[RMDB]
RNA sequence: GGGAACGACUCGAGUAGAGUCGAAAACUGGUCGGCGUCCGGUGGAAACUACCACCAGGCUUGGGGCCGAGAGACUCAAACGGGUACGUCCGGGGUAGGAGUGAAAUCCUGUAAUCCUGGACGGACCCUUUCUACGUGUAUUCGUACACGUAGAAAGAAAAGAAACAACAACAACAAC
Reactivity to 2A3 in 0.01 (KOAc 150mM, MgCl2 10mM, bicine 150mM(pH8.5), 24C), signal-to-noise 9, nucleotides 027 to 126: c030u040g070g030u020c010g030g070c030g180u030c010c010g000g010u020g000g030a160a120a080c120u170a140c040c000a010c000c010a070g010g020c030u100u200g070g000g070g000c000c020g000a010g000a000g010a010c040u040c090a080a130a080c110g010g000g000u030a010c000g000u000c000c000g000g000g000g010u040a020g000g010a010g010u070g080a050a060a060u020c000c000u020g070u110a050a050u040c000c000u000g000g000a000c000g000g000a000c000c000
Reactivity to DMS in 0.01 (KOAc 150mM, MgCl2 10mM, bicine 150mM(pH8.5), 24C), signal-to-noise 9, nucleotides 027 to 126: c050u010g010g020u000c010g010g020c110g010u000c020c050g020g020u000g010g010a150a120a140c300u030a160c010c000a010c010c010a080g010g010c100u010u020g010g010g000g010c000c000g000a050g000a100g010a150c060u010c070a060a110a100c190g000g000g000u000a020c000g000u000c000c000g010g000g000g020u000a010g000g000a030g000u000g020a110a120a150u000c000c000u000g000u030a140a040u010c000c000u000g000g000a010c000g000g000a000c000c000